[RMDB]
An RNA of 177 nucleotides, treated with DMS and 2A3 and read out base by base. Conditions: 150 mM KOAc, 10 mM MgCl2 and 150 mM bicine (pH 8.5), 24 C. For 2A3 the reverse transcriptase was SuperScript II with manganese. The data come from the RNA Mapping Database (RMDB), library OK1LIB. For 2A3, 2,192 sequencing reads were counted. For DMS, 2,786 sequencing reads were counted. 2A3 is a SHAPE reagent: it acylates the 2'-hydroxyl of flexible nucleotides of all four kinds.
RNA sequence: GGGAACGACUCGAGUAGAGUCGAAAAGGGAGACCCGAGCAGAGGCAUAGCGAACUGCGCACGGAGAAGCCUUGAGGGAACGCCGUAGGACCCGGGUUCGAUUCCCGGCCGCUCCACCGAAGGGCCAGGGUAUCAUCAGUUUCGACUGAUGAUACCCAAAAGAAACAACAACAACAAC
Reactivity to DMS in 0.01 (KOAc 150mM, MgCl2 10mM, bicine 150mM(pH8.5), 24C), signal-to-noise 3, nucleotides 027 to 126: g000g010g020a160g000a120c000c000c050g040a230g000c010a020g000a110g000g000c050a090u060a170g010c020g020a090a120c100u000g020c010g020c130a080c100g030g000a060g010a190a300g030c020c000u020u000g020a210g000g010g010a070a140c060g000c020c020g000u010a110g020g010a100c130c060c040g030g000g000u000u000c180g000a300u050u010c000c000c070g000g010c120c010g000c040u000c050c050a100c110c150g010a130a030g000g020g000c020c050a050
Reactivity to 2A3 in 0.01 (KOAc 150mM, MgCl2 10mM, bicine 150mM(pH8.5), 24C), signal-to-noise 3, nucleotides 027 to 126: g060g020g020a120g040a050c000c000c010g000a020g000c040a010g040a030g100g000c080a060u120a040g120c050g080a080a070c030u050g010c010g030c000a030c060g010g000a060g000a090a000g040c010c010u010u010g050a040g000g010g040a080a060c040g060c040c030g020u030a090g030g050a100c040c010c020g000g000g010u040u060c040g010a050u010u060c000c000c000g000g030c010c010g010c020u040c010c000a090c010c020g050a040a050g000g010g000c010c030a050